[RMDB]
RNA sequence: GGGAACGACUCGAGUAGAGUCGAAAAUAAGAAAAAUAAACAAGUGGUGGUAGUCCGCCACUCUAAGGGGACGCCUUUAGAAGAAGACGCUAGGUGGUAUUCCGGUGUGGGAUACUUGGUAAUAUGUAAGGGGAUGGUACGUUCGCGUACCAUCCAAGAAAAGUGAAAUGUUCGCAUUUCACUUUUCAAAAGAAACAACAACAACAAC
Reactivity to 2A3 in 0.01 (KOAc 150mM, MgCl2 10mM, bicine 150mM(pH8.5), 24C), signal-to-noise 1, nucleotides 027 to 156: u150a040a050g060a000a120a030a010a000u250a050a130a010c060a080a040g000u000g040g010u000g000g070u070a050g080u050c020c020g000c020c000a000c000u020c000u030a000a030g030g020g000g010a040c100g090c010c000u040u050u050a070g020a050a000g000a090a000g030a050c090g040c120u040a060g030g090u060g000g000u040a050u030u020c060c050g100g070u190g020u170g090g000g000a000u000a040c000u050u110g000g030u090a140a130u070a100u280g060u060a090a060g020g020g000g010a000u000g000g000u010a000c000g020u020u080c140g010c000g130u000a000c000c000a000u000c000c000a000a000

This 207-nucleotide RNA was probed chemically with 2A3. Values cover nucleotides 27 to 156. Reactivities are rounded to 0.1 and cut off at 0 and 3.